[RMDB]
RNA sequence: GGGAACGACUCGAGUAGAGUCGAAAAGUUGAAUUAGACACGCCCCUAUGUCAGUAUGUAAUAAAAACUGAUGUAAUGUUCGGAACUUGUGUUAUUGCUCGCGUUUUCAUGCGGACGGACAUGCAGGUAAAUAAAGUCGGUUCGCCGACUUUAUUUAAAAAGAAACAACAACAACAAC
Reactivity to DMS in 0.01 (KOAc 150mM, MgCl2 10mM, bicine 150mM(pH8.5), 24C), signal-to-noise 6, nucleotides 027 to 126: g010u000u000g010a110a110u040u030a080g010a090c090a090c100g000c030c000c000c080u020a030u010g010u000c000a010g020u010a030u030g010u020a150a100u060a110a070a080a070a020c000u010g010a010u000g010u000a020a070u020g000u010u000c040g000g010a070a060c040u010u010g000u010g010u010u010a080u030u020g000c030u000c040g020c030g010u000u020u020u010c140a050u010g010c060g000g000a060c020g000g000a060c080a010u010g010c060a020g010g020
Reactivity to 2A3 in 0.01 (KOAc 150mM, MgCl2 10mM, bicine 150mM(pH8.5), 24C), signal-to-noise 7, nucleotides 027 to 126: g080u060u090g080a130a110u150u080a170g040a020c020a010c040g040c020c000c000c010u030a020u070g010u010c010a000g020u020a110u180g170u090a090a130u170a160a220a030a010a010c000u000g020a010u000g030u030a130a100u070g040u070u090c040g050g050a090a100c050u160u110g000u000g040u190u090a190u140u160g020c030u050c010g050c000g050u050u000u160u160c100a090u150g020c010g000g030a010c010g020g010a010c000a010u020g020c020a020g080g060
This 177-nucleotide RNA was probed chemically with DMS and 2A3.
The reactions ran in a buffer of 150 mM KOAc, 10 mM MgCl2 and 150 mM bicine (pH 8.5), at 24 C.
For DMS, 19,118 sequencing reads were counted.